Notes:
Conditions: 150 mM KOAc, 10 mM MgCl2 and 150 mM bicine (pH 8.5), 24 C. Structure probing data (2A3 and DMS) for a 177-nucleotide construct. DMS adducts were read by reverse transcription with MarathonRT. For 2A3 the reverse transcriptase was SuperScript II with manganese.
RNA sequence: GGGAACGACUCGAGUAGAGUCGAAAAGAUAUGGAGUGAACUACACGAUAAGGAGCUUGGACCUCGGAAACGAGCUAGCUCCGAAACGUGCACUCCUAAGUCAAAUCAAGACGUUCGCGUCUUGAAAGGUUCCUAUCAUGUUCGCAUGAUAGGAACCAAAAGAAACAACAACAACAAC
Reactivity to 2A3 in 0.01 (KOAc 150mM, MgCl2 10mM, bicine 150mM(pH8.5), 24C), signal-to-noise 2, nucleotides 027 to 126: g030a020u020a020u130g010g000a020g040u020g020a090a100c110u220a050c300a000c050g000a030u120a220a290g000g020a000g000c020u090u120g140g190a300c020c010u040c060g020g030a070a070a010c000g000a020g010c000u010a000g000c000u000c000c000g020a000a010a010c000g000u000g000c000a000c010u040c000c000u000a100a000g010u060c020a000a000a280u010c010a040a010g000a020c020g060u070u020c300g000c010g060u010c000u000u000g000a110a030a000
Reactivity to DMS in 0.01 (KOAc 150mM, MgCl2 10mM, bicine 150mM(pH8.5), 24C), signal-to-noise 1, nucleotides 027 to 126: g020a000u000a300u010g020g020a000g000u000g000a060a110c070u010a300c010a000c010g020a040u030a150a300g010g000a000g000c030u020u010g060g000a140c250c010u020c000g000g020a090a080a180c030g020a040g110c030u000a020g000c000u010c000c000g000a020a050a060c000g000u000g000c000a000c020u000c020c000u050a030a120g000u010c000a060a130a290u010c000a000a030g000a000c000g000u010u030c230g040c000g020u000c060u000u000g000a010a080a140
Values cover nucleotides 27 to 126. For DMS, 848 sequencing reads were counted. It was measured as part of the RMDB library TTRDEL.